An RNA of 177 nucleotides, treated with DMS and read out base by base.
Reactivities are rounded to 0.1 and cut off at 0 and 3.
Source: RMDB library TTRINS, as collected in RNAgym.
The reactions ran in a buffer of 150 mM KOAc, 10 mM MgCl2 and 150 mM bicine (pH 8.5), at 24 C.
For DMS the reverse transcriptase was MarathonRT.

[RMDB]
RNA sequence: GGGAACGACUCGAGUAGAGUCGAAAAGAUAUGGAGCUUUGGUAGCGAUCCGUGGCAAUGAUGUAUCAGCUCGGAAACGAGCUGAUAUUGAGCCACCGGGAUCGCUAUAAUCAAAGCUCCUAAGUCAUCGGUAGAAGAAGUUCGCUUCUUCUACCGAAAAAGAAACAACAACAACAAC
Reactivity to DMS in 0.01 (KOAc 150mM, MgCl2 10mM, bicine 150mM(pH8.5), 24C), signal-to-noise 1, nucleotides 027 to 126: g000a100u000a300u000g000g000a000g030c010u000u010u000g020g010u010a030g000c000g020a010u010c000c000g000u010g000g020c000a260a180u010g000a090u000g000u000a000u000c020a010g020c000u000c000g020g000a080a100a300c010g010a020g030c000u000g010a000u000a000u010u000g000a120g000c000c000a000c130c300g040g000g030a010u000c000g050c000u000a000u050a190a070u010c000a010a010a020g000c000u010c000c000u000a000a070g010u000c010a100